[RMDB]
RNA sequence: GGGAACGACUCGAGUAGAGUCGAAAAGAUAUGGACACGGCUCGAGAACAACAGCCAGGCUCGGAAACGAGCCUGGACAUGUUCCGAGAACUACCGUGUCCUAAGUCAAACGCUCGUUCGCGAGCGAUCUUCGUUAUGACUUCGGUCAUAACGAAGAAAAAGAAACAACAACAACAAC
Reactivity to DMS in 0.01 (KOAc 150mM, MgCl2 10mM, bicine 150mM(pH8.5), 24C), signal-to-noise 2, nucleotides 027 to 126: g000a010u000a300u030g000g000a010c000a000c000g000g000c010u000c000g050a280g000a000a010c010a030a140c300a250g020c010c000a010g000g000c000u010c000g000g000a120a090a200c000g040a010g010c000c000u000g000g020a010c070a100u000g000u000u000c000c000g000a040g000a060a010c060u020a300c010c010g000u000g030u010c000c000u020a020a100g000u000c060a190a110a300c020g000c010u000c000g010u000u030c290g020c010g000a000g000c010g000a070
Reactivity to 2A3 in 0.01 (KOAc 150mM, MgCl2 10mM, bicine 150mM(pH8.5), 24C), signal-to-noise 2, nucleotides 027 to 126: g040a020u110a050u170g000g010a020c000a000c000g000g000c010u010c030g300a300g010a300a000c020a000a030c000a060g080c000c000a000g000g000c010u040c000g000g000a050a060a040c000g020a000g000c000c000u000g000g000a000c000a030u000g020u020u000c000c000g010a010g040a020a050c140u260a050c010c030g010u010g020u010c010c000u010a010a020g000u000c030a050a040a090c020g020c000u000c000g030u100u050c300g030c040g140a010g000c020g010a040